Structure probing data (2A3 and DMS) for a 177-nucleotide construct. 2A3 adducts were read by reverse transcription with SuperScript II with manganese. The reactions ran in a buffer of 150 mM KOAc, 10 mM MgCl2 and 150 mM bicine (pH 8.5), at 24 C. For 2A3, 2,489 sequencing reads were counted. The DMS profile rests on 1,847 reads. It was measured as part of the RMDB library OK1LIB.

[RMDB]
RNA sequence: GGGAACGACUCGAGUAGAGUCGAAAAUGGUGAACCGUUGCCGCGGAUCGGGGUCGAUGGCCCUGCGCAGCAACCGGCCGUAAGAGUCGUAGGUUUUCAGCACCGGGUCGUCUUCGGGUAGCCCAUCCCGAGUUAUCUGGUUCGCCAGAUAACUCGGAAAAGAAACAACAACAACAAC
Reactivity to 2A3 in 0.01 (KOAc 150mM, MgCl2 10mM, bicine 150mM(pH8.5), 24C), signal-to-noise 4, nucleotides 027 to 126: u120g010g010u060g060a020a020c010c010g000u010u010g030c020c030g020c030g020g020a150u200c050g010g010g000g030u050c130g200a240u300g060g010c000c000c000u020g020c030g010c010a030g000c000a000a010c070c020g060g000c020c000g060u150a080a020g050a020g070u050c040g040u130a120g040g030u030u020u070u170c110a060g030c040a010c000c020g050g000g000u020c050g020u000c010u070u030c040g030g000g000u050a050g020c030c000c000a040u030c030
Reactivity to DMS in 0.01 (KOAc 150mM, MgCl2 10mM, bicine 150mM(pH8.5), 24C), signal-to-noise 1, nucleotides 027 to 126: u010g000g000u000g000a030a110c020c000g020u000u000g000c030c010g050c060g000g000a130u080c050g050g080g000g000u000c020g000a200u030g010g000c000c000c000u000g000c040g010c010a060g000c080a040a030c010c030g000g000c000c020g010u030a060a170g000a100g040u000c020g000u000a100g000g000u000u000u000u030c060a100g040c090a150c120c050g000g000g010u000c020g030u000c030u010u030c000g000g000g000u000a100g020c050c020c040a060u000c020